[RMDB]
About this RNA: Source: RMDB library RNAMAK, as collected in RNAgym. Structure probing data (2A3) for a 207-nucleotide construct. The reactions ran in a buffer of 150 mM KOAc, 10 mM MgCl2 and 150 mM bicine (pH 8.5), at 24 C. For 2A3, 3,794 sequencing reads were counted.
RNA sequence: GGGAACGACUCGAGUAGAGUCGAAAAGGGGUCCUACAUCGAUCGCUCAUCACAGCAUCGAUCAUACACUGAAGCCUCCACGGUGUAUGGGAGCUGUGGGCGGGAGUAGGACGGAGGCACCCAAACCCAGCCUAAUAGUUCGCUAUUAGGCUGGGAACGUUACUUAGACCUUCGGGUCUAAGUAACGAAAAGAAACAACAACAACAAC
Reactivity to 2A3 in 0.01 (KOAc 150mM, MgCl2 10mM, bicine 150mM(pH8.5), 24C), signal-to-noise 3, nucleotides 027 to 156: g030g010g020g040u030c030c070u020a010c010a080u300c010g020a010u000c000g030c010u080c040a260u180c070a090c020a050g010c000a030u300c050g000a000u010c010a000u000a010c000a000c000u030g030a120a000g010c010c000u000c000c010a000c000g000g000u000g000u000a000u010g020g000g000a010g000c000u000g000u050g030g000g010c010g010g000g000a020g000u010a000g000g000a000c000g000g000a000g000g010c000a040c000c010c000a020a060a120c000c000c010a000g000c000c010u000a000a000u010a010g030u050u070c300g020c150u000a000u010u000a010g000g000c000u010g000g020g000a000a000